Record summary:
The record gives the reactivity of an RNA of 207 nucleotides to DMS and 2A3. For 2A3 the reverse transcriptase was SuperScript II with manganese.
[RMDB]
RNA sequence: GGGAACGACUCGAGUAGAGUCGAAAAGGGGUCUCAGCGGAUGUAUAGGACAUGCUCUACUGGUCUGAAGCCUCCACGGACCACUAGAGCAACAGCCUAUACGGAUGCUGAGACGGAGGCACCCAAAGCAUUUACAGGCUUCGGCCUGUAAAUGCAACUAUACAAGUGUCUUCGGACACUUGUAUAGAAAAGAAACAACAACAACAAC
Reactivity to DMS in 0.01 (KOAc 150mM, MgCl2 10mM, bicine 150mM(pH8.5), 24C), signal-to-noise 1, nucleotides 027 to 156: g040g000g000g010u000c000u010c020a050g030c050g010g020a300u010g010u000a050u000a040g020g010a110c030a260u000g020c010u010c010u000a060c020u000g020g020u000c020u020g000a050a100g030c010c020u000c010c030a300c060g000g010a010c000c010a030c010u010a030g030a050g030c020a030a030c100a100g010c030c010u000a120u000a030c010g000g010a300u010g000c010u000g020a070g010a000c040g000g060a060g000g040c010a100c020c000c010a080a100a200g020c000a000u010u010u000a010c000a000g000g010c000u010u010c300g040g000c000c030u010g000u000a000a000a030u000g050c010a020a070
Reactivity to 2A3 in 0.01 (KOAc 150mM, MgCl2 10mM, bicine 150mM(pH8.5), 24C), signal-to-noise 3, nucleotides 027 to 156: g080g020g030g010u000c000u010c000a010g000c000g040g040a070u160g030u010a000u000a000g010g040a070c180a230u210g000c000u010c010u010a010c010u000g010g000u000c000u020g060a090a040g040c020c020u010c020c020a020c020g000g000a000c000c010a000c010u000a000g000a000g000c020a040a030c030a050g020c010c000u000a000u000a000c010g010g010a040u100g000c000u000g000a000g000a000c000g000g000a000g030g000c020a050c000c000c000a060a060a020g000c000a000u000u010u000a000c000a010g000g020c000u040u220c300g130g000c010c010u000g000u000a000a000a000u000g000c000a000a000
It was measured as part of the RMDB library RNAMAK. The RNA was probed in 150 mM KOAc, 10 mM MgCl2 and 150 mM bicine (pH 8.5) at 24 C.